[RMDB]
About this RNA
Structure probing data (2A3 and DMS) for a 177-nucleotide construct. It was measured as part of the RMDB library M2PK90. High DMS reactivity at an A or C suggests that its Watson-Crick edge is free. DMS adducts were read by reverse transcription with MarathonRT. The 2A3 profile rests on 5,103 reads. For 2A3 the reverse transcriptase was SuperScript II with manganese.

RNA sequence: GGGAACGACUCGAGUAGAGUCGAAAAAUUGUGCGGUCUCUGAGAGAGGAGAACCUGUCUGAGUGAGCUUACCGCUUUUCAUAGUGGCUCUCUGAGAGACUCUGAGGCUCCUCUCGUUCCCAACCAAACUUUACUAGAUCUUCGGAUCUAGUAAAGUAAAAGAAACAACAACAACAAC
Reactivity to 2A3 in 0.01 (KOAc 150mM, MgCl2 10mM, bicine 150mM(pH8.5), 24C), signal-to-noise 4, nucleotides 027 to 126: a010u250u200g060u070g060c120g030g010u000c000u000c010u190g010a000g000a010g000a010g030g030a140g060a140a080c020c020u040g080u050c040u010g060a080g080u130g050a020g030c010u080u140a110c040c040g030c020u040u050u020u020c090a090u080a100g160u060g050g020c000u000c000u000c010u040g050a010g000a010g000a030c010u010c010u050g060a070g000g010c000u020c000c000u000c010u010c000g000u000u010c010c000c000a000a020c010c010a030a030
Reactivity to DMS in 0.01 (KOAc 150mM, MgCl2 10mM, bicine 150mM(pH8.5), 24C), signal-to-noise 3, nucleotides 027 to 126: a140u010u000g010u000g030c130g000g020u000c030u010c020u010g010a110g010a030g000a060g010g010a060g010a110a170c030c020u000g010u010c100u010g000a040g010u000g000a020g010c070u010u000a100c200c160g020c030u000u000u020u000c080a040u000a110g020u000g000g000c030u000c010u000c010u000g010a060g010a070g000a010c010u010c090u010g000a120g020g000c000u000c000c010u000c020u010c000g010u000u000c000c010c020a140a060c200c140a070a100